[RMDB]
The record gives the reactivity of an RNA of 207 nucleotides to 2A3 and DMS.
It was measured as part of the RMDB library M2RFPK.
The RNA was probed in 150 mM KOAc, 10 mM MgCl2 and 150 mM bicine (pH 8.5) at 24 C.
The 2A3 profile rests on 4,883 reads.

RNA sequence: GGGAACGACUCGAGUAGAGUCGAAAAGAUUCCUCGUUGUUGAGCGAGGUUUAAACAAAUCGACCACACAAACGUAGAGCCGUCUACGGAUUUAUAAAUUAAGGCAUUAAGUGUGAUAAGGAGACAAAAAACGAUGUUGUGUUCGCACAACAUCGAACUUAUGCGAAAUGUUCGCAUUUCGCAUAAGAAAAGAAACAACAACAACAAC
Reactivity to 2A3 in 0.01 (KOAc 150mM, MgCl2 10mM, bicine 150mM(pH8.5), 24C), signal-to-noise 6, nucleotides 027 to 156: g070a090u160u130c000c000u000c000g000u010u020g010u000u010g000a010g010c010g000a000g040g000u040u100u050a020a020a000c040a000a010a010u000c000g010a000c010c000a020c010a010c030a070a190a010c020g000u000a000g010a010g030c010c010g080u040c020u010a010c000g010g000a000u040u300u040a150u100a080a060a040u120u130a020a020g010g010c010a020u060u200a110a060g020u000g000u000g020a020u030a070a070g160g010a050g030a050c140a040a140a000a030a020a020c010g010a000u000g000u000u000g000u000g020u060u080c190g030c110a000c000a000a000c000a000u010c000g000a010a000
Reactivity to DMS in 0.01 (KOAc 150mM, MgCl2 10mM, bicine 150mM(pH8.5), 24C), signal-to-noise 3, nucleotides 027 to 156: g000a300u000u010c000c010u000c070g050u010u000g000u000u000g020a150g000c020g010a060g000g020u000u000u040a050a070a090c080a040a050a150u000c030g010a070c020c030a110c030a050c030a130a130a090c020g000u020a020g000a150g040c010c110g010u020c010u000a040c010g020g000a140u010u000u000a070u010a040a070a040u000u000a050a040g020g040c020a180u000u010a040a280g010u000g050u000g020a090u010a060a110g000g020a240g020a130c070a000a050a060a110a070a170c010g040a000u000g000u000u010g030u000g020u000u010c300g020c020a010c030a010a000c000a010u020c000g000a010a050